Chemical mapping of a 177-nucleotide RNA with DMS and 2A3. It was measured as part of the RMDB libraries RFM100 and RFMREP. 2A3 adducts were read by reverse transcription with SuperScript II with manganese. The RNA was probed in 150 mM KOAc, 10 mM MgCl2 and 150 mM bicine (pH 8.5) at 24 C.
RNA sequence: GGGAACGACUCGAGUAGAGUCGAAAAGAGCAGAUGUCCAUUACGCGAAUGCCUGUGCUUUUCGACGUUUAGUUUAGUCUGCAAGAUAGAAUUGAUGUCUCGAAGACAGGUACAUCAGCUUUUAGAGUAUUAUCUGUCACUUCGGUGACAGAUAAUAAAAAGAAACAACAACAACAAC
Reactivity to DMS in 0.01 (KOAc 150mM, MgCl2 10mM, bicine 150mM(pH8.5), 24C), signal-to-noise 7, nucleotides 027 to 126: g000a040g010c010a060g010a020u010g010u020c070c020a120u030u040a110c270g020c140g000a080a090u030g010c010c020u000g000u020g000c000u000u000u000u010c140g010a030c010g010u010u010u030a010g020u000u000u010a260g020u000c010u010g000c200a090a080g000a030u010a240g000a020a020u010u000g010a030u000g010u000c020u010c080g000a030a020g000a050c040a020g000g000u000a150c030a020u000c030a080g010c020u000u000u000u010a100g010a150g010
Reactivity to 2A3 in 0.01 (KOAc 150mM, MgCl2 10mM, bicine 150mM(pH8.5), 24C), signal-to-noise 7, nucleotides 027 to 126: g030a010g000c010a010g010a030u050g070u030c040c010a060u140u190a090c130g050c050g070a110a040u080g010c030c010u070g020u260g100c000u030u030u010u040c020g010a020c010g060u000u050u070a030g000u020u030u000a050g010u020c020u080g200c090a070a040g020a030u100a030g090a030a070u040u060g010a020u040g020u010c010u000c050g030a050a020g030a030c030a020g020g010u020a010c010a030u030c020a010g020c020u020u060u060u150a110g020a000g090